An RNA of 177 nucleotides, treated with 2A3 and DMS and read out base by base. For DMS, 2,000 sequencing reads were counted. For 2A3 the reverse transcriptase was SuperScript II with manganese. The 2A3 profile rests on 2,388 reads.
RNA sequence: GGGAACGACUCGAGUAGAGUCGAAAAGAAAACCGCAGUUGGCUAGCGGAAAGAAAGAGGGUUAAAGCCAACGAAAUAAGUCGGAAAGCACGACCGACAAGAAAAGCCCUACAAUCGUGAAAGAAAAGAGGAUAUAUAGCUUCGGCUAUAUAUCCUCAAAAGAAACAACAACAACAAC
Reactivity to 2A3 in 0.01 (KOAc 150mM, MgCl2 10mM, bicine 150mM(pH8.5), 24C), signal-to-noise 2, nucleotides 027 to 126: g040a000a110a000a000c000c000g000c010a000g000u010u010g040g000c100u130a140g040c030g060g060a140a090a000g130a010a190a020g080a030g000g040g030u040u030a070a010a020g010c000c000a030a000c000g040a010a080a100u190a230a080g010u020c000g010g000a200a140a020g050c010a050c030g010a020c000c000g040a000c000a000a020g070a000a080a000a000g000c010c010c000u010a060c110a060a010u080c030g030u090g030a220a030a000g040a010a070a020a020
Reactivity to DMS in 0.01 (KOAc 150mM, MgCl2 10mM, bicine 150mM(pH8.5), 24C), signal-to-noise 2, nucleotides 027 to 126: g000a130a060a070a240c010c010g050c000a110g010u000u000g000g000c000u030a070g090c000g000g000a060a030a080g010a070a110a150g000a060g080g000g000u000u010a030a070a020g030c040c020a000a050c010g000a180a060a060u040a090a170g030u000c000g000g020a050a010a180g010c030a000c050g020a050c030c020g000a010c000a110a090g030a020a050a040a030g000c000c000c000u030a080c120a090a150u000c030g050u000g010a160a160a060g000a070a030a130a120